[RMDB]
RNA sequence: GGGAACGACUCGAGUAGAGUCGAAAAAAAGAUAUGGAGCCACUCCCCACCUCCGUAACACCCGUUGAAAGGCUUUCGGAAACGAAAGCCUGGAGGGUGGAGAAGGAGAGGUGGCUCCUAAGUCAAACGUAAGUAUACAGUUCGCUGUAUACUUACGAAAAGAAACAACAACAACAAC
Reactivity to DMS in 0.01 (KOAc 150mM, MgCl2 10mM, bicine 150mM(pH8.5), 24C), signal-to-noise 5, nucleotides 027 to 126: a090a110a110g000a110u010a240u000g000g000a020g030c010c010a020c010u000c110c000c010c100a300c110c000u010c010c020g010u000a100a250c010a020c010c010c020g000u000u010g010a250a170a030g000g000c000u000u010u000c000g000g000a140a090a110c010g010a020a010a000g020c010c000u000g000g000a050g000g020g010u000g000g000a050g010a110a200g000g000a020g000a050g010g010u000g000g000c000u000c000c000u000a010a080g000u000c100a070a090a200
Reactivity to 2A3 in 0.01 (KOAc 150mM, MgCl2 10mM, bicine 150mM(pH8.5), 24C), signal-to-noise 1, nucleotides 027 to 126: a000a000a040g130a090u210a130u250g010g010a000g020c000c000a010c010u170c050c040c000c000a030c000c000u010c010c000g000u010a020a000c000a010c020c020c000g200u200u020g000a020a010a000g010g000c000u010u000u010c020g000g000a070a060a020c010g010a000a000a000g000c000c000u000g000g010a000g010g000g000u000g000g010a010g000a010a000g000g020a000g000a010g000g010u010g000g000c000u030c000c000u000a030a020g100u030c080a090a110a090
Structure probing data (DMS and 2A3) for a 177-nucleotide construct.
DMS adducts were read by reverse transcription with MarathonRT.
The reactions ran in a buffer of 150 mM KOAc, 10 mM MgCl2 and 150 mM bicine (pH 8.5), at 24 C.
The 2A3 profile rests on 5,405 reads.
Values cover nucleotides 27 to 126.